[RMDB]
RNA sequence: GGGAACGACUCGAGUAGAGUCGAAAAGAUAUGGAUAUAUUUAGUACAUAUUCCUCGUUGAAAUCGGAAACGAUGGAGAGGAUAUGGAACUGUAUAUCCUAAGUCAAAACGUGUCUUCGGACACGAACCAAUUAGACCGGUUCGCCGGUCUAAUUGGAAAAGAAACAACAACAACAAC
Reactivity to 2A3 in 0.01 (KOAc 150mM, MgCl2 10mM, bicine 150mM(pH8.5), 24C), signal-to-noise 2, nucleotides 027 to 126: g000a030u060a030u190g010g000a000u000a000u000a010u010u070u010a010g010u020a010c000a010u040a020u240u300c020c010u010c020g170u240u030g080a040a030a000u010c010g000g030a080a090a050c000g030a000u010g030g010a010g000a010g030g010a000u000a000u030g010g010a000a010c000u000g030u010a000u000a000u010c010c000u010a150a010g070u050c060a030a080a050a080c020g000u000g000u000c010u050u100c300g140g000a010c020a000c030g030a010a000
Reactivity to DMS in 0.01 (KOAc 150mM, MgCl2 10mM, bicine 150mM(pH8.5), 24C), signal-to-noise 1, nucleotides 027 to 126: g000a040u000a300u000g000g000a010u020a000u000a030u000u000u000a100g090u000a210c000a000u000a020u010u020c010c000u000c000g000u030u030g010a100a070a030u000c030g000g020a210a020a280c050g000a010u010g000g000a040g000a030g000g000a000u010a000u000g000g000a170a090c120u000g000u000a000u000a010u010c000c000u010a060a110g050u000c020a030a060a110a190c020g000u010g020u000c000u000u000c260g030g010a020c020a010c020g010a030a200